[RMDB]
RNA sequence: GGGAACGACUCGAGUAGAGUCGAAAAGAAAGAAAAUAAUAGUUCCAAAAAGCCGGAAGAGUGCAUAGAGGUAGAGAGAGCUUCAAACAGGAAUAAAUGUGCUACGGCGAUUUCCUGUUAGAGAAAAGGGAAUAUCAUUCUUCGGAAUGAUAUUCCCAAAAGAAACAACAACAACAAC
Reactivity to DMS in 0.01 (KOAc 150mM, MgCl2 10mM, bicine 150mM(pH8.5), 24C), signal-to-noise 2, nucleotides 027 to 126: g000a160a040a090g000a100a090a110a100u040a060a130u020a130g030u000u010c010c010a060a050a200a120a040g040c080c110g010g020a010a050g000a150g030u000g010c000a040u010a020g000a010g020g020u010a060g010a090g000a050g020a140g000c070u010u010c030a090a050a000c010a000g000g000a040a010u000a060a050a070u000g000u000g000c050u020a070c060g070g010c020g000a020u030u000u000c000c000u010g000u000u000a130g020a080g000a080a060a080a120
Reactivity to 2A3 in 0.01 (KOAc 150mM, MgCl2 10mM, bicine 150mM(pH8.5), 24C), signal-to-noise 2, nucleotides 027 to 126: g020a030a130a010g090a050a110a030a010u140a020a060u030a120g040u080u140c000c010a010a020a000a220a090g060c030c060g080g000a100a020g010a020g130u080g000c000a000u110a040g020a000g030g000u080a000g020a000g000a000g000a000g080c000u090u070c040a100a060a010c010a010g000g020a030a040u130a220a110a110u230g050u090g030c010u000a010c200g070g000c000g020a020u000u000u030c000c000u000g020u070u030a060g060a000g000a120a030a010a210
An RNA of 177 nucleotides, treated with DMS and 2A3 and read out base by base. High DMS reactivity at an A or C suggests that its Watson-Crick edge is free. It was measured as part of the RMDB library OK1LIB. The RNA was probed in 150 mM KOAc, 10 mM MgCl2 and 150 mM bicine (pH 8.5) at 24 C.